[RMDB]
RNA sequence: GGGAACGACUCGAGUAGAGUCGAAAACGCUGAGCUGAAAAAUAUUGAUGUGCUGGUGAAUAAUGCUGGUUUAGCAUUAGGCUUGGAACCGGCUCACAAAGCCAAUGUUGAAGAUUGGGAUACGAUGAGCGUAGAAUCUUUUCGAAGAUUCUACGCUAAAAGAAACAACAACAACAAC
Reactivity to DMS in 0.01 (KOAc 150mM, MgCl2 10mM, bicine 150mM(pH8.5), 24C), signal-to-noise 2, nucleotides 027 to 126: c090g010c080u010g000a090g050c030u000g000a030a090a090a070a140u010a140u020u000g010a130u000g010u000g010c020u020g000g020u010g010a110a090u020a010a040u010g010c020u000g030g030u030u030u030a010g040c010a060u010u000a070g020g020c110u010u010g040g010a150a070c040c010g000g020c010u010c060a040c090a010a090a120g000c030c000a030a060u000g010u000u030g000a070a130g000a110u000u000g010g000g010a100u010a070c080g020a130u000g010
An RNA of 177 nucleotides, treated with DMS and read out base by base.
The data come from the RNA Mapping Database (RMDB), library OK2TRN.